[RMDB]
RNA sequence: GGGAACGACUCGAGUAGAGUCGAAAACAGCGAUAUGAUGGCAUACCAUCUUUCGGGACUGACUUUUACAGUGGAGAUGUUUUACCCUUAACUGAUCGCUCAAAAGCACGUAGCUUCGGCUACGUGCGACUAUCAUAAUGUUCGCAUUAUGAUAGUCAAAAGAAACAACAACAACAAC
Reactivity to 2A3 in 0.01 (KOAc 150mM, MgCl2 10mM, bicine 150mM(pH8.5), 24C), signal-to-noise 9, nucleotides 027 to 126: c020a010g040c010g010a010u020a050u180g050a020u050g020g000c070a070u090a240c020c000a010u010c000u020u070u090c050g050g030g090a030c020u030g060a060c020u140u190u130u250a110c040a020g020u050g080g050a060g010a040u030g050u030u060u030u140a100c010c000c000u030u070a090a050c060u090g070a050u050c030g010c030u040c080a090a130a020a030g000c000a000c000g000u000a000g000c000u030u030c210g090g000c000u000a000c000g000u000g000c000
Reactivity to DMS in 0.01 (KOAc 150mM, MgCl2 10mM, bicine 150mM(pH8.5), 24C), signal-to-noise 9, nucleotides 027 to 126: c120a060g010c010g010a020u000a050u010g010a060u000g000g010c180a120u010a090c230c010a010u000c010u000u000u000c070g020g020g020a100c070u000g000a160c180u010u010u010u010a110c060a030g020u000g000g010a060g010a050u000g000u000u000u000u000a130c080c010c050u000u010a060a110c160u010g000a040u000c040g000c030u000c170a060a050a090a160g010c000a000c000g010u000a010g000c000u000u010c220g020g000c000u000a000c000g010u000g000c000
Structure probing data (2A3 and DMS) for a 177-nucleotide construct. The RNA was probed in 150 mM KOAc, 10 mM MgCl2 and 150 mM bicine (pH 8.5) at 24 C. For 2A3, 63,218 sequencing reads were counted. It was measured as part of the RMDB library RFMREP. Values cover nucleotides 27 to 126. 2A3 adducts were read by reverse transcription with SuperScript II with manganese. Values are in units of 0.01, from 0 to 300, in steps of 10.